[RMDB]
RNA sequence: GGGAACGACUCGAGUAGAGUCGAAAAACCCUCGCCCGAUGUUCGCUGAUUCGUCAGCCGCAUGCCCAGGUGGCCGCGAUCUUCAAGGCUACGGCGCGGAUAGGUCCGCGCUGAUCGUUAUCCUCCAACCGCAUAACCGGCUUCGGCCGGUUAUGAAGAUUAUAAUACCGUUCGCGGUAUUAUAAUCAAAAGAAACAACAACAACAAC
Reactivity to 2A3 in 0.01 (KOAc 150mM, MgCl2 10mM, bicine 150mM(pH8.5), 24C), signal-to-noise 2, nucleotides 027 to 156: a000c020c000c030u010c030g040c000c020c020g060a080u060g030u100u150c070g000c030u010g030a060u060u050c120g060u020c120a020g030c040c030g000c010a040u100g010c010c030c040a020g030g000u010g010g000c010c010g100c060g030a000u000c010u010u030c030a040a010g020g000c010u010a000c010g010g000c000g000c000g010g010a040u150a180g210g150u030c010c000g000c000g000c000u010g020a000u030c020g050u110u140a150u180c020c030u060c060c030a080a120c060c040g010c030a000u000a000a000c000c000g000g030c030u050u050c060g060g020c000c000g000g010u000u000a000u000g000a000a000
Reactivity to DMS in 0.01 (KOAc 150mM, MgCl2 10mM, bicine 150mM(pH8.5), 24C), signal-to-noise 1, nucleotides 027 to 156: a090c020c000c000u000c050g040c000c010c000g000a140u000g020u000u020c010g040c000u040g020a120u000u010c190g030u010c030a050g020c000c050g010c020a070u000g030c050c050c000a170g020g050u000g020g020c040c040g000c050g010a060u010c020u010u000c070a080a300g030g000c000u010a070c020g000g000c000g060c060g040g030a110u000a120g030g000u010c000c010g000c040g000c010u000g000a030u000c030g000u010u020a170u010c020c010u010c040c040a070a130c100c000g000c010a030u000a010a010c010c000g030g020c000u000u010c300g030g050c000c000g000g030u000u000a000u000g000a060a110